[RMDB]
RNA sequence: GGGAACGACUCGAGUAGAGUCGAAAACAUGGAUUCAGGGUGAAUCGGGAUUUGGUGGAAACCACUUGCCAUAUCCAGGCAUGUGAAAUAAUUUGCUCCGCGAAGUCUAGCAAUUUGAUCGCUGAUAGCACCCAGCUACUUUCGAGUAGCUGGGUGCAAAAGAAACAACAACAACAAC
Reactivity to 2A3 in 0.01 (KOAc 150mM, MgCl2 10mM, bicine 150mM(pH8.5), 24C), signal-to-noise 1, nucleotides 027 to 126: c000a050u090g070g000a070u070u100c000a030g040g040g040u000g000a030a000u070c090g020g000g070a130u090u000u020g130g140u110g000g070a000a000a300c040c000a030c000u030u000g000c000c000a110u080a300u170c050c000a000g000g000c000a000u030g000u060g130a300a100a000u300a070a110u200u200u240g110c030u000c000c010g170c080g040a050a030g000u030c050u010a050g030c000a000a040u000u140u160g000a000u080c080g070c190u110g030a000u030a010
An RNA of 177 nucleotides, treated with 2A3 and read out base by base.
2A3 adducts were read by reverse transcription with SuperScript II with manganese.
Values cover nucleotides 27 to 126.
Conditions: 150 mM KOAc, 10 mM MgCl2 and 150 mM bicine (pH 8.5), 24 C.